Chemical mapping of a 207-nucleotide RNA with 2A3 and DMS. For DMS, 1,286 sequencing reads were counted. Conditions: 150 mM KOAc, 10 mM MgCl2 and 150 mM bicine (pH 8.5), 24 C. Values cover nucleotides 27 to 156. 2A3 adducts were read by reverse transcription with SuperScript II with manganese.
[RMDB]
RNA sequence: GGGAACGACUCGAGUAGAGUCGAAAAUGGAUAUAACCCAUAUAUAAUGUUGAAUUAAAUUUGACAUCCUAUAUUUAGUUACGAUAUUUGGACUGAGUGUUCCUCAAUCCAAUAUGAUUGGUGUCCUUACAAGAAGACAUCCAUGUAAAGACAGACAAUCCGGUUACAGUUUCGACUGUAACCGGAUAAAAGAAACAACAACAACAAC
Reactivity to 2A3 in 0.01 (KOAc 150mM, MgCl2 10mM, bicine 150mM(pH8.5), 24C), signal-to-noise 1, nucleotides 027 to 156: u050g000g040a040u130a000u020a220a040c000c010c040a000u010a000u010a000u000a120a110u030g000u000u010g010a030a100u060u060a300a020a030u020u080u010g010a010c010a020u010c000c020u090a070u010a040u270u260u070a090g010u030u110a030c010g010a020u010a030u200u190u210g000g000a000c010u000g000a000g000u120g040u050u090c010c000u000c000a000a050u000c000c040a000a000u020a030u040g030a030u030u030g010g000u000g010u000c000c000u050u090a020c050a060a040g230a040a000g060a070c010a060u170c060c000a030u060g000u030a000a030a030g010a020c150a000g080a040c010a020
Reactivity to DMS in 0.01 (KOAc 150mM, MgCl2 10mM, bicine 150mM(pH8.5), 24C), signal-to-noise 1, nucleotides 027 to 156: u000g010g020a300u010a070u000a030a070c020c020c290a030u000a020u000a100u000a010a010u010g000u010u000g000a030a000u010u010a110a110a300u000u000u000g000a000c000a070u000c020c200u010a020u000a030u030u000u000a060g000u000u000a030c030g000a110u000a020u000u000u000g000g020a010c000u000g000a030g020u000g000u000u010c040c000u000c010a080a000u000c000c000a060a010u010a030u000g010a070u010u010g010g000u000g000u000c000c020u000u000a020c040a080a130g010a040a090g000a110c200a040u000c020c020a160u000g000u000a030a020a090g010a100c060a160g030a110c070a020